[RMDB]
RNA sequence: GGGAACGACUCGAGUAGAGUCGAAAAGCUCUGGAAUUGAGGCCCCUCUAACAAUAAUCCAAAACUACUUCGCAGAGUAAUCUGCCGAAUCGUAGGAUGCCCAUUACUAUCUAUUUUUGGAGCAUCCAAAACUGUCAGUGCUUCGGCACUGACAGAACAAAAUACAGGACUUCGGUCCUGUAUUUUGAAAAGAAACAACAACAACAAC
Reactivity to DMS in 0.01 (KOAc 150mM, MgCl2 10mM, bicine 150mM(pH8.5), 24C), signal-to-noise 1, nucleotides 027 to 156: g040c000u000c010u000g050g000a060a120u020u030g030a230g000g000c020c010c040c020u010c070u010a090a120c060a180a060u010a110a050u020c080c010a040a060a110a170c020u010a090c040u010u010c000g010c010a100g000a060g000u010a150a180u000c000u000g000c000c030g030a070a010u000c090g010u000a130g000g020a040u000g020c000c020c000a090u000u000a060c120u000a150u010c160u000a200u000u010u000u000u000g050g020a140g010c020a040u000c000c010a000a050a010a110c010u000g010u000c010a000g000u000g000c000u010u010c290g070g040c020a000c000u000g000a010c010a000g000a010a120
Reactivity to 2A3 in 0.01 (KOAc 150mM, MgCl2 10mM, bicine 150mM(pH8.5), 24C), signal-to-noise 2, nucleotides 027 to 156: g010c010u000c010u050g010g090a120a070u150u020g010a020g040g030c000c000c020c000u070c080u130a100a050c040a100a080u170a040a040u080c020c030a000a070a030a080c020u070a070c010u030u040c030g000c000a000g000a010g030u110a160a180u000c000u000g040c070c070g040a030a010u070c030g010u020a060g010g010a000u000g000c000c000c000a000u040u000a040c010u080a100u250c070u110a190u090u090u000u010u040g030g020a130g030c010a000u000c010c000a000a000a000a090c000u010g000u000c000a000g000u000g010c000u040u080c130g030g000c010a000c020u000g000a000c000a000g000a010a000